[RMDB]
RNA sequence: GGGAACGACUCGAGUAGAGUCGAAAAGAAAUUACGUUUCCUUUACACUUCUCAAACCGGGAUCAAGAGCAGCAAAGCAUCCCUCAUAUCCACGAUGGAGGGUGUCGUGGAGUAUACUGUACCAAAAAGAGCGAACACGGCUUCGGCCGUGUUCGAACUGAUUGUAGAUGUUCGCAUCUACAAUCAGAAAAGAAACAACAACAACAAC
Reactivity to 2A3 in 0.01 (KOAc 150mM, MgCl2 10mM, bicine 150mM(pH8.5), 24C), signal-to-noise 6, nucleotides 027 to 156: g040a010a070a030u190u130a040c050g010u020u020u040c020c000u030u060u090a050c070a030c040u130u110c050u050c060a120a180a100c070c060g020g000g000a040u050c050a100a040g010a030g090c030a000g020c040a080a050a070g020c010a050u020c000c020c000u040c020a100u110a040u030c000c010a010c030g010a020u060g090g040a040g080g000g020u040g010u000c000g010u010g010g000a010g000u000a010u020a050c090u060g060u110a060c020c070a040a050a030a040a030g110a050g080c000g000a000a000c000a000c000g010g020c010u040u050c150g050g000c000c000g000u000g000u000u000c000g000a000a000
Reactivity to DMS in 0.01 (KOAc 150mM, MgCl2 10mM, bicine 150mM(pH8.5), 24C), signal-to-noise 2, nucleotides 027 to 156: g020a070a010a070u010u000a120c140g000u000u000u000c010c000u040u010u000a090c030a090c050u000u000c010u000c040a100a090a140c070c020g000g030g030a110u010c070a070a150g010a120g020c030a110g010c040a090a080a070g010c070a100u000c000c000c060u000c060a090u010a080u000c080c020a030c050g020a080u020g000g000a070g010g010g050u000g030u000c030g010u000g000g000a090g010u010a030u000a030c030u010g020u000a110c080c020a050a040a060a060a120g000a150g000c030g010a030a000c000a010c000g040g010c000u000u000c300g040g030c000c000g000u010g020u000u000c000g010a000a030